RNA sequence: GGGAACGACUCGAGUAGAGUCGAAAACGGUCCUUCGGGACCGAAAAAAGCGUACUACGGUUCGCAACACGCACGAAGGUGAAAUCCCAAAUAGGAUUUCAUGUUGACGUGCGGUUGAACUACGAACCGUAUCGCAAAAAACGUGCUUCGGCACGAAUCUACACUCUGGAUUCGUCCAGAGUGUAGAAAAAGAAACAACAACAACAAC
Reactivity to DMS in 0.01 (KOAc 150mM, MgCl2 10mM, bicine 150mM(pH8.5), 24C), signal-to-noise 2, nucleotides 027 to 156: c030g020g020u000c000c010u000u020c300g060g020g010a020c000c010g010a000a000a090a050a040a110g010c020g040u000a050c160u000a020c000g010g010u010u010c020g000c000a050a130c150a120c000g000c000a020c000g030a300a150g000g000u000g010a000a010a000u010c000c000c020a030a100a290u000a030g010g000a020u000u000u000c000a020u000g030u010u000g000a280c010g040u000g000c000g010g030u000u000g020a140a160c020u000a040c000g000a010a020c000c020g000u010a010u000c020g000c000a000a020a040a070a080a140c010g060u000g020c000u000u010c250g010g040c030a020c020g010a020a050
Reactivity to 2A3 in 0.01 (KOAc 150mM, MgCl2 10mM, bicine 150mM(pH8.5), 24C), signal-to-noise 4, nucleotides 027 to 156: c020g010g000u020c010c000u070u130c150g080g010g010a000c000c000g060a010a000a000a000a000a000g040c040g020u060a070c060u000a000c030g010g020u000u000c010g000c010a000a010c300a100c070g000c000a000c010g010a080a010g110g010u020g000a000a000a010u070c000c020c070a150a290a080u290a100g000g000a010u000u000u020c000a010u040g200u170u070g070a140c010g000u010g000c000g000g000u000u010g000a050a040c070u090a050c140g000a000a000c010c000g000u000a000u010c000g000c000a040a040a000a090a020a040c010g000u000g010c000u060u060c100g100g000c000a000c000g000a000a010